[RMDB]
RNA sequence: GGGAACGACUCGAGUAGAGUCGAAAAGAAGUGAGAAGUAAGGUUUAUAGUAUAGGAAAUCUUUUUGAUGAAAAGGUAGAUUUAUUUGACCAAUGCAAAUACAAAAAAAUAGAUAACAGUUUACUUAGAUGCUAUAAUGAAGAGGUAGAAAAAUCUACAUAUACGAGGAGUUCGCUCCUCGUAUAUGAAAAGAAACAACAACAACAAC
Reactivity to DMS in 0.01 (KOAc 150mM, MgCl2 10mM, bicine 150mM(pH8.5), 24C), signal-to-noise 2, nucleotides 027 to 156: g000a090a110g020u000g010a070g010a110a090g000u000a080a070g010g010u040u000u000a040u000a130g010u000a100u000a090g040g010a110a110a090u000c000u000u000u000u030u000g010a160u000g000a060a020a090a070g000g000u000a070g010a150u000u020u020a050u000u030u000g010a210c030c060a080a160u000g010c020a000a040a040u010a140c050a000a010a130a230a080a120a020u000a080g000a070u010a060a110c020a070g000u000u010u000a030c030u020u010a080g000a060u020g000c020u010a060u000a060a060u000g000a030a080g000a050g030g050u000a070g000a030a060a030a070a060u000c020u000a110
Reactivity to 2A3 in 0.01 (KOAc 150mM, MgCl2 10mM, bicine 150mM(pH8.5), 24C), signal-to-noise 2, nucleotides 027 to 156: g010a040a020g040u060g030a050g030a130a000g020u060a070a020g020g030u050u100u050a070u120a030g030u020a070u100a100g020g010a030a120a140u080c030u090u060u050u030u080g100a070u100g010a020a000a020a050g030g070u050a020g010a060u020u140u160a080u060u100u170g040a040c020c000a050a020u110g000c020a030a030a070u110a110c090a060a160a010a090a000a000a000u100a030g040a020u130a080a030c000a020g040u070u150u040a040c020u060u060a030g020a090u050g030c000u020a010u040a150a080u090g020a040a050g050a010g010g010u070a020g070a010a030a000a090a000u100c000u150a040